[RMDB]
RNA sequence: GGGAACGACUCGAGUAGAGUCGAAAAACUGUUGCGCCGGCGGAUCGCCGAGAGCGGAUUGGCGGCGGAGCAGUCGAGCGACCAGCCACGUAUCUGCCCGGGAGAACGUUAUCGUCUGUCGGACGGCCCUAGCGACGAUGUUCGCAUCGUCGCUAGGAAAAGAAACAACAACAACAAC
Reactivity to 2A3 in 0.01 (KOAc 150mM, MgCl2 10mM, bicine 150mM(pH8.5), 24C), signal-to-noise 2, nucleotides 027 to 126: a000c000u010g040u050u070g090c010g000c000c000g110g030c000g040g110a030u030c000g020c000c060g160a110g050a030g090c050g020g030a030u010u040g100g060c000g000g000c030g020g040a000g030c000a060g020u040c030g010a080g010c020g020a050c000c000a000g000c020c000a010c020g060u130a130u050c040u010g010c000c000c000g000g000g010a020g050a110a040c060g050u180u140a110u210c020g030u000c010u070g240u080c010g020g020a030c000g000g000c000